[RMDB]
RNA sequence: GGGAACGACUCGAGUAGAGUCGAAAAGAUAUGGAGAACCAGCUUUUGACGGAAGGUCGGAAACGACCCUUCCGAUAAGCUGUGUUCUCCUAAGUCAAACCUGGUGGGCGUUCGCGCCCACCAGGAACUUAAAAUGAAAGUUCGCUUUCAUUUUAAGAAAAGAAACAACAACAACAAC
Reactivity to DMS in 0.01 (KOAc 150mM, MgCl2 10mM, bicine 150mM(pH8.5), 24C), signal-to-noise 2, nucleotides 027 to 126: g000a050u000a300u000g010g000a010g010a010a020c020c010a010g030c000u010u000u010u010g020a230c230g000g000a030a010g000g020u000c000g020g010a100a040a130c020g010a000c060c070c100u000u020c000c010g020a050u000a010a000g020c000u000g000u020g000u000u000c010u000c000c010u000a010a050g000u000c030a090a150a190c010c010u020g000g050u000g000g000g060c050g000u000u020c240g020c010g000c000c000c000a020c000c000a000g020g000a000a070
Reactivity to 2A3 in 0.01 (KOAc 150mM, MgCl2 10mM, bicine 150mM(pH8.5), 24C), signal-to-noise 1, nucleotides 027 to 126: g010a020u040a000u110g000g000a010g000a000a000c000c000a020g000c010u230u290u230u300g210a030c000g000g000a030a010g030g000u030c010g000g020a040a050a010c000g010a020c070c090c000u000u000c010c000g000a010u030a050a040g000c020u020g000u000g000u000u020c010u000c000c000u030a050a010g000u000c040a070a030a080c000c020u000g030g060u030g070g000g000c090g080u170u240c300g100c000g000c200c000c030a000c030c020a000g000g000a010a000